Structure probing data (DMS and 2A3) for a 177-nucleotide construct. The 2A3 profile rests on 778 reads. Reactivities are given for positions 27 through 126. The RNA was probed in 150 mM KOAc, 10 mM MgCl2 and 150 mM bicine (pH 8.5) at 24 C. For 2A3 the reverse transcriptase was SuperScript II with manganese.
RNA sequence: GGGAACGACUCGAGUAGAGUCGAAAAUUAUGAGGUUAUCGAUGUCCAAGGUGGCAUGAUGUCCUUUGAAGAACUUUAAAAAUUUGCAUUUCUCCUACUUGGUGUGGACUGGGUAGGAGAAUGUUAUUAACAACCUAGAGUUCGCUCUAGGUUGUUAAAAAGAAACAACAACAACAAC
Reactivity to DMS in 0.01 (KOAc 150mM, MgCl2 10mM, bicine 150mM(pH8.5), 24C), signal-to-noise 2, nucleotides 027 to 126: u010u020a070u000g000a000g010g000u000u020a010u000c020g020a020u000g030u030c000c030a200a180g020g020u100g000g010c000a000u020g010a010u000g010u000c000c000u000u000u000g010a110a100g000a120a150c120u000u010u040a030a050a040a120a140u000u090u010g000c000a020u000u020u000c000u000c000c010u010a000c000u000u000g020g000u000g020u100g000g000a050c010u000g000g000g020u000a020g010g010a010g000a000a000u000g000u010u010a060u020
Reactivity to 2A3 in 0.01 (KOAc 150mM, MgCl2 10mM, bicine 150mM(pH8.5), 24C), signal-to-noise 2, nucleotides 027 to 126: u100u050a000u260g000a000g000g000u100u130a020u000c110g030a000u030g000u000c010c010a160a050g100g300u300g200g030c040a000u000g000a050u010g010u030c000c050u040u000u000g000a030a090g020a000a070c120u250u220u210a050a050a120a070a300u100u300u220g040c000a000u070u030u180c040u000c000c000u000a000c000u000u000g060g020u220g070u270g120g080a000c000u110g000g000g020u000a010g000g010a010g000a000a000u000g000u030u000a000u030